[RMDB]
Background:
The record gives the reactivity of an RNA of 207 nucleotides to DMS and 2A3.
RNA sequence: GGGAACGACUCGAGUAGAGUCGAAAAAUAAAAAUAGCAGUCUGCCAGGGUCUGCCGGAAGAGACAGAUAAGCAUACAUAUUAACAUGGAUAUAUAUGUGAAUUUCAUUCAAAUGGUUCUCACAUGAGAGUAACUAGCAUCUUUCUCUCAGAUGAUGCUUUUUAAAAGCAUUCGUGCUUUUAAAAAGAAAAGAAACAACAACAACAAC
Reactivity to DMS in 0.01 (KOAc 150mM, MgCl2 10mM, bicine 150mM(pH8.5), 24C), signal-to-noise 2, nucleotides 027 to 156: a070u000a060a060a060a070a150u000a060g030c020a080g020u010c040u010g040c060c040a140g000g020g050u000c010u010g040c000c040g040g020a140a090g030a110g000a030c050a060g020a040u000a180a300g020c020a020u000a000c010a020u010a020u000u000a050a090c120a190u000g020g010a030u010a030u000a010u000a020u010g000u000g010a080a070u000u010u000c020a090u010u000c070a030a090a130u010g020g010u010u000c030u000c030a120c110a140u000g000a120g010a010g030u020a030a030c080u000a110g030c060a080u010c020u000u010u000c030u000c020u000c010a040g010a120u010g000a100u000g010
Reactivity to 2A3 in 0.01 (KOAc 150mM, MgCl2 10mM, bicine 150mM(pH8.5), 24C), signal-to-noise 2, nucleotides 027 to 156: a010u160a020a050a020a010a000u090a070g000c000a010g040u010c030u050g050c050c030a050g030g000g040u030c010u030g040c050c030g040g030a060a040g020a020g000a010c030a020g060a040u040a070a020g000c000a000u040a060c020a020u110a020u050u080a150a030c040a130u100g050g030a010u050a000u010a000u000a030u120g030u030g030a060a090u050u120u190c060a040u100u040c040a060a070a150u020g040g000u030u040c030u020c030a020c010a090u090g020a000g000a010g050u050a050a000c060u050a060g000c000a020u030c050u010u150u010c010u020c010u010c010a010g020a090u070g000a010u110g000

About this RNA: For 2A3 the reverse transcriptase was SuperScript II with manganese. For 2A3, 1,147 sequencing reads were counted.